The record gives the reactivity of an RNA of 207 nucleotides to 2A3 and DMS. For 2A3 the reverse transcriptase was SuperScript II with manganese. The data come from the RNA Mapping Database (RMDB), library OK3TST. Conditions: 150 mM KOAc, 10 mM MgCl2 and 150 mM bicine (pH 8.5), 24 C.
[RMDB]
RNA sequence: GGGAACGACUCGAGUAGAGUCGAAAACAAGCCGAACAGCGUCAUUAGUGAUCAAGAAGUUUCCAGCCAUGUUCCAAUUGGGUGACCUGAGCGUCGACUGGUCAAUGUAUGGCGCUGCGAGCGCCUGAACCUUAAGCUCGACCUUUCUGACAUGGACUAUUUGAUAGGAUUUCGAUCCUAUCAAAUAAAAAGAAACAACAACAACAAC
Reactivity to 2A3 in 0.01 (KOAc 150mM, MgCl2 10mM, bicine 150mM(pH8.5), 24C), signal-to-noise 5, nucleotides 027 to 156: c020a020a040g090c030c010g060a080a060c040a040g020c020g070u030c030a050u050u160a060g060u040g090a060u100c090a090a040g070a120a030g070u010u040u010c010c010a020g000c020c010a030u050g040u100u040c060c040a150a130u150u120g050g000g020u050g070a050c020c070u120g010a020g020c070g040u080c030g040a020c030u040g000g000u020c020a040a050u160g070u120a090u090g020g000c000g000c010u030g020c050g030a070g010c010g000c000c010u050g040a070a080c010c000u060u120a060a060g010c030u010c010g030a040c000c000u050u150u000c060u060g030a020c010a030u050g030g020a040c010
Reactivity to DMS in 0.01 (KOAc 150mM, MgCl2 10mM, bicine 150mM(pH8.5), 24C), signal-to-noise 3, nucleotides 027 to 156: c030a070a110g030c000c020g020a070a090c040a070g000c110g000u000c000a060u000u000a100g030u000g010a050u040c020a070a200g010a080a230g020u000u000u000c010c020a080g000c020c000a070u000g000u000u000c100c020a080a150u010u000g010g000g010u000g020a050c030c030u000g010a110g030c060g020u000c050g020a070c080u010g030g000u000c030a090a080u020g020u010a060u010g020g010c000g020c000u010g010c180g010a170g020c020g040c000c010u000g010a040a090c030c030u000u000a060a130g000c020u000c000g020a060c030c000u000u000u000c030u010g000a050c040a080u000g010g010a240c140